The data come from the RNA Mapping Database (RMDB), library M2PK50. The record gives the reactivity of an RNA of 177 nucleotides to DMS and 2A3. For 2A3, 6,706 sequencing reads were counted.

RNA sequence: GGGAACGACUCGAGUAGAGUCGAAAAUCAAGCCGUUUCGACGGCUUGAACACUAUAGAGUCCUGAGGGACUACGAUCCAGAGUACGGGAGGAACUCUAAGGCCUAGCCCUGCUUCGGCAGGGCUAAGACUUCUCAUAGAUUCGUCUAUGAGAAGUCAAAAGAAACAACAACAACAAC
Reactivity to DMS in 0.01 (KOAc 150mM, MgCl2 10mM, bicine 150mM(pH8.5), 24C), signal-to-noise 4, nucleotides 027 to 126: u000c000a010a010g010c000c000g020u000u000u020c180g010a030c010g020g010c000u010u000g010a010a040c130a110c060u000a120u000a040g000a030g010u000c010c010u000g010a250g010g000g000a040c020u000a030c090g000a120u010c140c050a140g000a080g010u000a060c050g010g010g010a070g010g010a070a050c000u000c010u010a030a110g000g000c040c020u000a020g020c000c010c000u000g010c000u000u010c180g020g000c000a010g010g000g000c000u000a000a040
Reactivity to 2A3 in 0.01 (KOAc 150mM, MgCl2 10mM, bicine 150mM(pH8.5), 24C), signal-to-noise 4, nucleotides 027 to 126: u020c010a010a000g010c000c010g010u020u040u150c240g110a020c000g000g000c000u000u010g000a000a000c000a000c000u170a160u030a210g030a000g020u020c010c000u030g060a210g080g090g010a010c020u130a110c110g120a180u050c050c040a030g020a020g140u080a040c020g020g040g030a040g030g030a100a060c000u000c010u040a060a050g060g010c000c000u000a000g000c010c000c010u010g010c010u030u040c140g050g000c010a000g000g000g020c000u000a000a000